[RMDB]
RNA sequence: GGGAACGACUCGAGUAGAGUCGAAAAACUAACAAAUAUCGUGGUUUUGGCCACUGGUGGAAUCGGUAGAAUUUUCGGGCGUACUACCAAUCCAGUAACGGCUACUGGCGACGGCCUAGCCAUGGCCCCAACAGGAAUUGUUCGCAAUUCCUGUUGGAAAAGAAACAACAACAACAAC
Reactivity to DMS in 0.01 (KOAc 150mM, MgCl2 10mM, bicine 150mM(pH8.5), 24C), signal-to-noise 2, nucleotides 027 to 126: a100c050u000a120a100c130a140a080a130u020a100u010c050g020u000g010g010u000u000u000u000g010g000c000c000a130c130u010g020g000u000g020g020a100a060u010c100g000g000u000a040g050a120a140u000u010u020u000c100g010g000g020c100g000u000a150c000u000a020c020c010a110a110u000c000c010a020g000u020a060a070c250g000g010c080u000a000c100u010g000g020c190g000a130c240g010g000c010c020u010a050g000c060c020a090u000g000g010c070c030
Reactivity to 2A3 in 0.01 (KOAc 150mM, MgCl2 10mM, bicine 150mM(pH8.5), 24C), signal-to-noise 2, nucleotides 027 to 126: a010c040u100a050a010c040a070a100a080u180a100u200c060g000u040g030g010u010u040u140u090g030g000c030c000a040c070u010g030g020u030g050g060a140a060u160c030g070g000u040a030g050a160a160u000u110u140u150c070g050g030g050c030g060u040a020c010u010a010c000c000a010a020u040c020c000a010g000u050a080a030c110g100g000c030u000a030c070u070g030g010c040g070a160c110g050g000c030c000u000a020g000c000c000a010u010g040g000c000c000

The record gives the reactivity of an RNA of 177 nucleotides to DMS and 2A3. The data come from the RNA Mapping Database (RMDB), library OK2TST. 2A3 adducts were read by reverse transcription with SuperScript II with manganese.